[RMDB]
RNA sequence: GGGAACGACUCGAGUAGAGUCGAAAAGACGCUGAUGCGAUCGACUGUAAGAUAGAUAAAUUGAGCAGACAGAUACGUACGGCAAGUAUCGUCGCCAGAAAUACAGUCGCAAAUUGCCGUACGAAGAAUAGUGCUAAUACUUCGGUAUUAGCACUAUAAAAGAAACAACAACAACAAC
Reactivity to DMS in 0.01 (KOAc 150mM, MgCl2 10mM, bicine 150mM(pH8.5), 24C), signal-to-noise 6, nucleotides 027 to 126: g010a120c040g020c020u020g020a100u030g010c020g020a160u050c020g020a040c000u000g000u000a020a140g010a140u030a100g010a120u040a040a060a120u030u000g010a170g010c020a110g030a030c050a120g010a090u040a030c000g040u010a020c010g020g000c000a030a040g000u010a020u000c040g010u000c000g000c020c020a070g000a050a060a050u010a010c020a020g020u000c000g000c200a040a070a100u000u000g000c000c000g020u000a100c100g010a100a100g020a090
Reactivity to 2A3 in 0.01 (KOAc 150mM, MgCl2 10mM, bicine 150mM(pH8.5), 24C), signal-to-noise 9, nucleotides 027 to 126: g060a020c030g010c060u180g080a140u260g030c020g060a090u050c020g010a020c000u010g000u040a070a060g080a240u170a030g140a090u210a180a170a070u130u100g040a050g040c070a050g030a040c010a030g040a040u070a110c010g030u020a000c000g000g000c000a000a020g040u030a030u040c030g000u000c000g000c020c020a060g110a030a030a000u040a000c010a000g020u020c000g010c040a040a130a080u030u000g000c000c000g020u030a050c030g040a030a030g060a070
The record gives the reactivity of an RNA of 177 nucleotides to DMS and 2A3. It was measured as part of the RMDB library OK1LIB.